Record summary
This 177-nucleotide RNA was probed chemically with 2A3 and DMS. DMS adducts were read by reverse transcription with MarathonRT. The data come from the RNA Mapping Database (RMDB), library OK2TRN. For 2A3, 3,211 sequencing reads were counted.
RNA sequence: GGGAACGACUCGAGUAGAGUCGAAAAACAUGAACACCUUGGCAAAAUGGGGCACCAUCAGGAGCACGGCCACAAUACACAGCAAUUGCGUGGCCCUUACUACGGUGACCAAUGUGUCUGAUGCGAAGAAUCCAUGCAAUUUCGAUUGCAUGGAUUCAAAAGAAACAACAACAACAAC
Reactivity to 2A3 in 0.01 (KOAc 150mM, MgCl2 10mM, bicine 150mM(pH8.5), 24C), signal-to-noise 3, nucleotides 027 to 126: a000c060a050u140g060a070a020c030a070c020c010u040u040g010g000c030a010a040a040a180u140g020g020g020g060c010a010c000c000a010u130c060a020g040g010a020g040c090a020c140g020g000c010c010a010c010a000a050u130a050c120a000c040a110g200c070a080a210u110u090g030c040g000u010g000g000c000c000c020u030u090a070c010u010a020c010g030g020u040g010a030c020c010a000a090u050g020u020g000u000c010u030g110a120u090g020c050g030a050a020
Reactivity to DMS in 0.01 (KOAc 150mM, MgCl2 10mM, bicine 150mM(pH8.5), 24C), signal-to-noise 4, nucleotides 027 to 126: a040c080a070u000g020a120a050c070a020c010c030u000u010g000g000c080a060a040a160a170u000g000g010g010g010c070a020c020c010a110u000c200a080g000g010a070g030c230a090c300g000g000c040c000a010c010a080a120u000a040c060a090c120a170g020c180a130a040u000u010g000c270g010u000g010g020c010c010c060u000u000a110c030u000a040c130g010g000u000g000a060c000c000a030a020u000g000u000g010u000c040u000g000a050u010g000c050g000a100a100